Chemical mapping of a 177-nucleotide RNA with DMS and 2A3. 2A3 adducts were read by reverse transcription with SuperScript II with manganese. Conditions: 150 mM KOAc, 10 mM MgCl2 and 150 mM bicine (pH 8.5), 24 C. Source: RMDB libraries RFM100 and RFMREP, as collected in RNAgym.
RNA sequence: GGGAACGACUCGAGUAGAGUCGAAAAGAAAGAAAGAAAGAAUGCUGGCCAGAGCUCUUUUCACAUUGUGCUACUGUCUGCACCUGUCACUAGCAGUGCAAUGUUAAAAGGGCAUUGGCCGUGUAAAUGACAUUAGAUUCUUCGGAAUCUAAUGUCAAAAAGAAACAACAACAACAAC
Reactivity to DMS in 0.01 (KOAc 150mM, MgCl2 10mM, bicine 150mM(pH8.5), 24C), signal-to-noise 5, nucleotides 027 to 126: g010a080a070a090g010a060a080a110g000a100a080a100g000a090a080u010g000c040u020g020g000c000c010a020g010a050g020c000u000c000u000u000u000u000c080a010c000a000u000u000g010u000g010c010u000a040c020u000g010u010c120u000g010c040a160c200c130u020g000u010c030a060c100u020a030g010c030a010g020u000g000c000a010a010u000g000u000u000a000a010a000a010g010g000g010c000a030u010u000g000g010c000c000g000u000g010u010a040a100a100
Reactivity to 2A3 in 0.01 (KOAc 150mM, MgCl2 10mM, bicine 150mM(pH8.5), 24C), signal-to-noise 8, nucleotides 027 to 126: g090a010a040a010g130a040a080a000g100a050a060a010g140a090a050u130g030c080u130g020g000c000c000a010g010a010g040c000u000c000u010u000u000u000c030a010c000a000u000u010g020u030g040c010u020a040c000u020g070u140c070u070g030c040a140c050c070u150g060u150c020a020c090u100a020g010c020a000g000u010g020c000a000a000u000g000u000u000a010a000a000a010g000g000g000c000a000u010u000g000g000c000c000g000u000g000u030a080a170a070